Source information:
Chemical mapping of a 177-nucleotide RNA with 2A3 and DMS. The reactions ran in a buffer of 150 mM KOAc, 10 mM MgCl2 and 150 mM bicine (pH 8.5), at 24 C.

[RMDB]
RNA sequence: GGGAACGACUCGAGUAGAGUCGAAAAAGCUGAGUCGUACGCGACUCAGCAAAGAGGCCGCACCUUGCCUUGCUGCCCGGGCCGUGCACCCGUGGGCCCCAGGGCGACGCGGCGGGGGCGGCCCUAAGUAAAGUCAUGCUUUCGAGCAUGACUUUACAAAAGAAACAACAACAACAAC
Reactivity to 2A3 in 0.01 (KOAc 150mM, MgCl2 10mM, bicine 150mM(pH8.5), 24C), signal-to-noise 1, nucleotides 027 to 126: a000g000c000u000g000a000g000u020c010g000u040a040c240g020c010g130a000c000u000c010a000g000c000a010a000a000g010a000g000g000c000c000g000c000a300c060c010u030u090g000c010c010u030u220g000c020u030g000c000c000c000g000g000g000c020c010g100u200g030c030a120c030c020c080g100u160g000g000g070c000c000c000c090a140g000g000g000c010g000a100c100g010c010g000g000c000g000g000g000g010g000c000g000g000c010c000c000u030a000a000
Reactivity to DMS in 0.01 (KOAc 150mM, MgCl2 10mM, bicine 150mM(pH8.5), 24C), signal-to-noise 1, nucleotides 027 to 126: a100g000c000u000g010a020g010u000c000g040u070a100c200g030c070g020a010c000u000c020a030g000c000a000a000a070g030a120g000g000c020c030g010c010a070c010c000u000u010g010c020c000u000u000g000c040u000g040c000c020c060g020g000g000c000c000g000u020g020c000a230c180c180c260g020u000g000g020g000c000c010c010c080a150g000g000g000c000g000a070c050g000c300g030g000c020g000g010g010g020g010c020g000g000c000c000c000u000a020a110